[RMDB]
RNA sequence: GGGAACGACUCGAGUAGAGUCGAAAAAGCUGUACAACCUGCGAACGGCCAUCAAGCAAAAUGAGAACCUAGCGUGGAAGAUCCGCGACACAGCAGAUAUUGUGGCCGCGGUGCCCCGGAAGACCACGCUAAUACGCCACUUCGGUGGCGUAUUAGCAAAAGAAACAACAACAACAAC
Reactivity to DMS in 0.01 (KOAc 150mM, MgCl2 10mM, bicine 150mM(pH8.5), 24C), signal-to-noise 2, nucleotides 027 to 126: a140g020c030u000g000u060a080c060a070a030c140c000u000g000c110g010a030a090c140g010g000c000c040a080u010c090a040a020g010c190a030a080a170a020u000g010a070g000a070a090c040c050u000a070g000c000g000u000g000g000a080a230g000a200u010c000c000g010c070g000a060c000a030c000a030g010c300a120g000a120u040a050u050u000g010u000g000g020c100c000g000c040g000g000u000g030c030c000c000c010g000g040a050a090g030a180c020c040a050c040
Reactivity to 2A3 in 0.01 (KOAc 150mM, MgCl2 10mM, bicine 150mM(pH8.5), 24C), signal-to-noise 3, nucleotides 027 to 126: a000g030c040u020g000u020a040c000a070a160c080c010u030g010c040g110a090a020c050g020g000c040c010a040u060c080a080a030g120c010a030a010a060a170u200g000a090g040a080a040c020c020u020a030g060c000g030u080g020g010a050a000g070a130u040c000c000g010c020g010a010c000a000c000a020g120c050a060g130a200u170a050u160u140g000u030g010g060c080c000g010c010g000g000u100g000c010c010c000c000g080g000a040a010g050a040c010c000a020c100